RNA sequence: GGGAACGACUCGAGUAGAGUCGAAAAGAAAGAAAGAAAAAUGCUGUUUCAAGGUAGUACCAGUACCUUGUGUUCAGUGGAACCAAGGUAAACACAAGGUAUUGGUAUUACCUUGAGAUAGCAUUAAAAUGUGCUAUUUUUUCGAAAAUAGCACAUUAAAAGAAACAACAACAACAAC
Reactivity to 2A3 in 0.01 (KOAc 150mM, MgCl2 10mM, bicine 150mM(pH8.5), 24C), signal-to-noise 4, nucleotides 027 to 126: g130a020a050a000g140a050a110a010g110a020a120a020a010a000u000g000c000u000g000u010u000u000c000a000a010g010g000u000a010g010u000a010c000c010a010g010u000a000c000c000u020u000g000u000g010u030u060c050a090g060u180g180g120a050a020c060c030a070a010g100g000u110a110a050a000c000a000c000a000a020g010g000u000a000u010u000g000g000u000a000u000u000a000c000c000u000u000g000a000g000a000u000a000g010c010a000u010u000a000a000
Reactivity to DMS in 0.01 (KOAc 150mM, MgCl2 10mM, bicine 150mM(pH8.5), 24C), signal-to-noise 9, nucleotides 027 to 126: g010a090a080a080g010a080a080a100g010a020a070a090a030a010u000g000c000u000g010u000u010u000c000a010a000g000g010u000a010g010u000a000c000c000a010g020u000a000c000c000u000u000g010u000g000u000u000c080a140g030u010g010g010a120a140c200c160a100a100g020g010u020a060a010a010c000a000c000a010a000g000g010u000a000u000u000g000g000u000a000u000u000a000c000c000u000u000g000a000g000a000u000a000g010c000a000u000u000a020a040